Chemical mapping of a 207-nucleotide RNA with 2A3 and DMS. For DMS, 2,320 sequencing reads were counted. For 2A3, 3,766 sequencing reads were counted. Conditions: 150 mM KOAc, 10 mM MgCl2 and 150 mM bicine (pH 8.5), 24 C. Values cover nucleotides 27 to 156.
[RMDB]
RNA sequence: GGGAACGACUCGAGUAGAGUCGAAAAUGGCUUUGGCAGUUGGUAGAAAAUCAACUCAGGUGGACUCGCAGCAGAAACCUCCGGUUACGGGCCGCAAUAGUGUCAGUAGCAUAUGCUGCCGACACGCCCACUCGUACGUGAUUGGCUACCACCACACGAAUCAAUUUGAGUUCGCUCAAAUUGAUUCAAAAGAAACAACAACAACAAC
Reactivity to 2A3 in 0.01 (KOAc 150mM, MgCl2 10mM, bicine 150mM(pH8.5), 24C), signal-to-noise 5, nucleotides 027 to 156: u110g040g000c040u140u080u080g060g030c050a080g020u080u040g070g000u040a060g080a050a080a030a050u040c030a040a070c060u030c090a060g000g010u020g010g040a090c030u020c080g070c040a110g010c020a010g080a090a100a060c010c010u050c030c040g000g010u030u030a030c030g030g050g000c040c040g000c070a050a100u110a150g020u020g000u010c010a010g000u010a000g000c040a040u100a090u300g010c000u000g000c000c000g010a010c000a000c020g010c000c000c000a020c000u020c020g040u080a070c060g030u040g000a040u040u040g040g000c010u000a010c000c010a010c020c020a080c020a010c110
Reactivity to DMS in 0.01 (KOAc 150mM, MgCl2 10mM, bicine 150mM(pH8.5), 24C), signal-to-noise 1, nucleotides 027 to 156: u000g000g020c010u000u020u010g010g020c030a010g020u030u010g020g000u000a070g000a080a050a110a060u000c010a120a080c000u010c030a050g010g030u000g050g010a060c050u010c080g030c030a070g010c020a120g020a120a070a050c060c010u000c080c080g060g030u000u000a090c030g000g000g030c010c060g000c130a090a100u000a120g030u000g030u000c010a030g010u000a030g040c000a290u040a100u000g000c010u000g000c010c020g020a020c010a000c010g020c080c040c030a020c020u000c000g030u020a020c070g000u000g010a020u000u000g020g040c050u020a000c010c000a060c010c020a040c090a150c160